[RMDB]
RNA sequence: GGGAACGACUCGAGUAGAGUCGAAAAAUUAGACUGAAUUGUGACAAUUUUCAAACAUUUUAAUGUGUAAAUCAUUGGCAAAAUAUACGAAUUGCAUUUAAAUCGUCAAUUUACAUAUAUUUUUGCGAAAUAGGUUCCAAUUCGUUGGAACCUAUUUAAAAGAAACAACAACAACAAC
Reactivity to DMS in 0.01 (KOAc 150mM, MgCl2 10mM, bicine 150mM(pH8.5), 24C), signal-to-noise 3, nucleotides 027 to 126: a090u000u000a070g020a110c060u010g010a070a080u010u010g010u000g010a190c090a090a070u000u000u000u000c090a120a090a110c040a050u010u010u020u010a020a030u000g000u000g000u010a170a110a050u000c040a010u000u000g010g000c010a000a000a010a010u000a010u000a000c090g010a030a010u010u000g020c070a070u010u020u020a070a110a110u010c200g010u000c000a000a010u000u000u000a110c060a070u000a010u000a000u000u000u000u010u000g010c020g000
Reactivity to 2A3 in 0.01 (KOAc 150mM, MgCl2 10mM, bicine 150mM(pH8.5), 24C), signal-to-noise 2, nucleotides 027 to 126: a000u110u030a050g020a030c040u020g040a060a120u190u050g040u040g070a040c030a040a100u050u000u080u140c020a040a090a030c000a000u100u140u110u210a090a060u040g000u010g050u040a000a060a030u020c050a030u060u020g020g000c000a050a000a000a000u010a010u000a050c010g000a020a020u000u000g020c020a000u250u240u100a150a250a130u110c020g110u030c010a010a010u000u010u070a040c040a000u070a000u000a050u060u130u020u090u040g000c000g030